An RNA of 177 nucleotides, treated with 2A3 and DMS and read out base by base. High DMS reactivity at an A or C suggests that its Watson-Crick edge is free. The reactions ran in a buffer of 150 mM KOAc, 10 mM MgCl2 and 150 mM bicine (pH 8.5), at 24 C. Values cover nucleotides 27 to 126.
[RMDB]
RNA sequence: GGGAACGACUCGAGUAGAGUCGAAAAGAUAUGGACGCUUCGAUAAGCCUCACUCGGAAACGAGUGAAGGCUUUUGACGAAGAUGUCCUAAGUCAAAGGCGUGGAAGACUUCGGUCUUCCACGCCAACCUAGCCUAAUAGUUCGCUAUUAGGCUAGGAAAAGAAACAACAACAACAAC
Reactivity to 2A3 in 0.01 (KOAc 150mM, MgCl2 10mM, bicine 150mM(pH8.5), 24C), signal-to-noise 2, nucleotides 027 to 126: g010a000u030a000u050g010g000a000c000g010c010u020u000c010g040a060u060a300a010g000c010c010u000c010a000c000u010c000g000g020a030a010a000c000g000a000g040u000g000a020a000g000g000c020u000u000u030u010g000a000c000g010a000a020g060a050u110g000u010c000c000u000a000a000g010u010c030a080a080a170g010g030c010g020u010g000g000a010a020g020a010c020u110u160c300g010g000u000c000u000u030c000c010a000c030g000c000c000a000a000
Reactivity to DMS in 0.01 (KOAc 150mM, MgCl2 10mM, bicine 150mM(pH8.5), 24C), signal-to-noise 3, nucleotides 027 to 126: g010a010u000a020u020g000g000a020c000g010c010u000u000c010g010a010u010a010a010g020c000c000u000c000a010c000u000c000g020g010a010a010a020c000g000a020g010u000g010a020a010g000g000c000u000u000u000u000g000a300c020g010a020a010g000a030u010g010u000c000c000u000a000a070g000u000c010a090a120a110g000g020c000g070u000g000g000a040a020g010a040c000u010u010c200g020g020u000c000u000u000c000c000a000c000g000c000c010a000a010